[RMDB]
RNA sequence: GGGAACGACUCGAGUAGAGUCGAAAAAGAGCCGACGAACCUUCCAACCUUCCAACCUUCCAACCAUCCAACCUUCCAACCUUCCAAUCUACUCGAGAGGAGGAGGAGGAGGAGGAGGAGGACAUAACGUGCAUGGAUUAUUCGUAAUCCAUGCACGAAAAGAAACAACAACAACAAC
Reactivity to DMS in 0.01 (KOAc 150mM, MgCl2 10mM, bicine 150mM(pH8.5), 24C), signal-to-noise 1, nucleotides 027 to 126: a120g000a120g010c040c060g080a030c090g010a060a050c060c000u000u000c040c030a060a130c130c040u010u040c020c010a060a050c060c000u010u010c000c010a060a180c070c020a100u000c000c030a060a040c010c040u000u000c030c030a100a100c090c040u000u000c020c030a130a170u000c000u000a060c080u030c050g010a000g000a250g000g060a230g010g000a140g000g010a170g000g000a140g000g000a120g000g000a170g000g020a170g000g010a300c180a030u010a040a080
Reactivity to 2A3 in 0.01 (KOAc 150mM, MgCl2 10mM, bicine 150mM(pH8.5), 24C), signal-to-noise 1, nucleotides 027 to 126: a000g050a010g090c030c000g050a050c030g040a070a080c000c000u040u020c050c030a050a030c030c000u040u000c020c030a040a040c030c020u040u000c030c040a100a070c010c000a070u010c000c000a050a110c040c030u060u010c000c050a050a060c030c020u120u000c010c000a050a140u000c000u040a040c020u040c060g030a000g010a030g080g020a070g010g040a050g000g070a060g000g000a060g000g030a020g000g090a020g020g070a020g000g050a000c030a040u240a090a040